[RMDB]
RNA sequence: GGGAACGACUCGAGUAGAGUCGAAAAGAUAUGGAGUCCCGCCCUGGAGCGAUUCAUCUCGGAAACGAGAUGAUCGCUAUGAAGGUAACAAGGACUCCUAAGUCAAAUCCAUGCUUCGGCAUGGAAACCAUUUGAAUUACUUCGGUAAUUCAAAUGGAAAAGAAACAACAACAACAAC
Reactivity to DMS in 0.01 (KOAc 150mM, MgCl2 10mM, bicine 150mM(pH8.5), 24C), signal-to-noise 3, nucleotides 027 to 126: g000a030u000a300u000g000g000a030g010u000c000c010c130g010c100c020c000u000g010g020a020g000c000g000a010u000u000c010a000u000c000u020c000g010g000a110a060a140c010g010a010g000a010u000g010a010u000c000g000c000u000a000u010g000a110a050g010g000u000a090a130c150a140a150g000g010a010c000u000c000c010u000a020a070g000u000c020a100a120a150u000c010c000a020u000g000c000u000u020c220g020g000c000a010u000g000g010a010a030a140
Reactivity to 2A3 in 0.01 (KOAc 150mM, MgCl2 10mM, bicine 150mM(pH8.5), 24C), signal-to-noise 3, nucleotides 027 to 126: g020a030u070a060u150g000g010a000g000u000c060c040c010g040c000c020c010u140g060g140a020g000c010g020a000u220u270c000a000u000c000u000c020g000g050a100a080a070c020g000a000g000a000u010g000a000u000c000g000c000u020a030u050g030a030a020g030g020u080a160a080c080a130a190g020g010a000c000u000c000c000u010a120a010g020u020c050a000a030a200u010c010c010a000u000g010c010u060u150c300g140g000c010a010u000g000g000a060a000a020